[RMDB]
Chemical mapping of a 207-nucleotide RNA with 2A3 and DMS. Values cover nucleotides 27 to 156. For 2A3, 7,633 sequencing reads were counted. The data come from the RNA Mapping Database (RMDB), library OK3TST.

RNA sequence: GGGAACGACUCGAGUAGAGUCGAAAACUGCAUUUCCUGACUUUAUCCAUGUUUCAGCAUUCUAUCUUCUGUCACCAUAAGUCACCGAGAAUGUCCAUAAUUUCCAGUAUAUUUUCCUCCACACCACAUCUUCCAAACUGGCACCCUUACUGGGAAACAGGUAGUACUAUUUCGAUAGUACUACCUGAAAAGAAACAACAACAACAAC
Reactivity to 2A3 in 0.01 (KOAc 150mM, MgCl2 10mM, bicine 150mM(pH8.5), 24C), signal-to-noise 8, nucleotides 027 to 156: c030u050g000c030a080u030u050u060c010c000u050g090a110c030u110u110u080a090u120c050c040a080u100g050u020u050u050c030a030g010c030a090u070u070c050u120a170u030c030u090u010c030u050g060u030c030a040c080c010a070u040a170a050g040u050c020a030c070c030g020a020g030a130a080u070g050u050c040c020a050u060a160a100u120u050u010c010c010a010g080u010a070u010a050u200u080u070u040c010c020u020c010c010a060c000a020c040c010a030c010a080u010c020u090u020c020c020a060a070a060c040u020g030g010c030a080c020c010c000u030u080a090c070u040g030g000g000a020a030a020
Reactivity to DMS in 0.01 (KOAc 150mM, MgCl2 10mM, bicine 150mM(pH8.5), 24C), signal-to-noise 3, nucleotides 027 to 156: c050u010g020c020a300u000u000u010c030c000u000g020a070c030u000u000u020a060u010c040c030a140u000g020u010u010u000c030a080g000c050a140u000u000c060u000a080u000c040u000u000c020u000g000u000c040a080c020c040a080u000a020a080g010u000c030a090c080c020g000a150g010a100a070u000g010u010c030c040a110u000a080a080u000u010u000c010c010a110g030u000a120u010a080u000u010u000u000c000c000u000c050c020a060c050a070c030c000a070c040a060u000c040u000u000c030c030a040a080a060c060u000g000g010c050a120c020c000c030u000u000a080c040u010g020g020g010a090a090a220